[RMDB]
RNA sequence: GGGAACGACUCGAGUAGAGUCGAAAAGAAUUGGUAUGUAAGCUACGUCUUCCGGUAGCUGCGUCACACUUUAAGAGUGUGCAUACUGAGCCGAAGCUCAGCUUCGGUCCCCCAAGGGAAGAACAAAAUAAUCGUACUCAUUCGUGAGUACGAUUAUAAAAGAAACAACAACAACAAC
Reactivity to DMS in 0.01 (KOAc 150mM, MgCl2 10mM, bicine 150mM(pH8.5), 24C), signal-to-noise 5, nucleotides 027 to 126: g010a080a090u000u000g000g000u000a000u000g000u000a300a180g010c000u010a000c010g000u010c000u000u000c010c010g000g000u000a000g010c010u000g000c030g010u010c000a000c000a000c000u000u020u030a090a090g010a020g010u000g020u000g000c000a010u000a000c020u000g000a030g010c000c000g000a000a000g000c020u050c180a150g010c000u000u000c000g000g010u000c040c030c000c120c120a060a050g000g020g010a010a030g000a160a160c280a090a050a050
Reactivity to 2A3 in 0.01 (KOAc 150mM, MgCl2 10mM, bicine 150mM(pH8.5), 24C), signal-to-noise 9, nucleotides 027 to 126: g120a020a120u020u010g010g000u000a000u000g000u000a020a000g000c000u000a000c000g080u030c000u000u000c000c010g000g010u000a000g000c000u000g000c000g000u010c000a000c000a000c010u050u130u300a300a120g210a000g290u000g000u000g000c000a000u000a000c000u000g000a000g000c000c000g000a000a000g000c040u100c300a040g000c000u040u000c000g000g000u000c000c000c000c000c010a030a040g090g000g000a000a010g010a010a010c060a010a060a000
Structure probing data (DMS and 2A3) for a 177-nucleotide construct.
For DMS the reverse transcriptase was MarathonRT.
High DMS reactivity at an A or C suggests that its Watson-Crick edge is free.
Conditions: 150 mM KOAc, 10 mM MgCl2 and 150 mM bicine (pH 8.5), 24 C.
The 2A3 profile rests on 21,356 reads.
2A3 adducts were read by reverse transcription with SuperScript II with manganese.
Values cover nucleotides 27 to 126.